[RMDB]
RNA sequence: GGGAACGACUCGAGUAGAGUCGAAAAGUGUCAUGGCAAUAAUGAUUCCAUUAGCAUUAAUGUUUGGUAAGUUAGCGGAUAAAAUAGGUGAAAAGAAAGUAUUUCUAAUUGGUACUGGUGGGCUAACCUCCACAGAGUGAUUCGUCACUCUGUGGAGAAAAGAAACAACAACAACAAC
Reactivity to 2A3 in 0.01 (KOAc 150mM, MgCl2 10mM, bicine 150mM(pH8.5), 24C), signal-to-noise 2, nucleotides 027 to 126: g060u060g010u070c110a120u150g090g000c100a020a100u140a030a040u090g180a150u080u030c080c030a000u000u060a000g060c020a000u110u060a230a060u170g170u040u010u040g190g000u000a030a030g030u010u030a000g030c070g090g000a110u060a150a040a080a120u120a070g000g110u180g080a040a060a060a090g100a050a050a040g020u070a100u030u260u060c110u140a170a110u100u090g100g000u030a020c000u010g010g010u070g070g000g010c000u020a010a010c000
Reactivity to DMS in 0.01 (KOAc 150mM, MgCl2 10mM, bicine 150mM(pH8.5), 24C), signal-to-noise 3, nucleotides 027 to 126: g000u030g000u000c060a040u000g020g000c060a050a050u020a120a030u030g040a300u000u010c100c050a030u010u000a070g010c030a030u000u000a100a070u000g010u020u000u020g000g000u010a040a060g000u000u000a040g000c080g020g000a130u030a020a020a040a050u030a070g000g010u040g020a060a050a100a060g000a050a090a100g000u000a070u000u000u000c060u000a080a080u000u010g000g000u000a030c030u000g000g040u000g010g010g020c010u000a020a070c170
Chemical mapping of a 177-nucleotide RNA with 2A3 and DMS. For DMS the reverse transcriptase was MarathonRT. For 2A3, 832 sequencing reads were counted. The DMS profile rests on 3,908 reads.